[RMDB]
RNA sequence: GGGAACGACUCGAGUAGAGUCGAAAAUCGCGUAUGUCGGCCAUAUCAUCGAUAUUUCCUGGCUAAGUGAGUUACAAGACAUUGAGAUCCGUGGCAACGAGUUGGGAUCCGCGACUGAACUACCAAAGUCGUAAAUCGUGUUCGCACGAUUUACGACAAAAGAAACAACAACAACAAC
Reactivity to 2A3 in 0.01 (KOAc 150mM, MgCl2 10mM, bicine 150mM(pH8.5), 24C), signal-to-noise 2, nucleotides 027 to 126: u010c010g000c000g030u070a040u170g130u030c040g000g030c040c020a050u050a030u250c060a020u000c010g020a000u020a040u110u040u000c000c000u020g000g000c010u050a170a060g070u030g180a030g010u040u070a090c070a160a000g030a020c040a070u050u300g030a070g000a090u030c020c010g010u020g020g030c060a090a040c100g040a030g060u040u140g010g000g000a020u000c010c000g060c010g020a000c060u080g030a040a000c060u060a050c090c030a110a040a000
Reactivity to DMS in 0.01 (KOAc 150mM, MgCl2 10mM, bicine 150mM(pH8.5), 24C), signal-to-noise 2, nucleotides 027 to 126: u000c030g030c100g040u040a070u020g030u000c080g010g040c100c100a070u000a030u020c140a060u000c070g030a090u000a070u000u010u000c050c020u000g010g020c060u010a100a090g030u000g010a060g010u000u000a060c070a110a140g010a020c140a100u000u010g010a160g000a040u000c060c100g000u000g020g000c030a090a070c100g020a100g030u010u000g030g000g000a090u000c140c040g010c040g000a010c080u000g000a080a100c090u030a120c060c080a080a110a050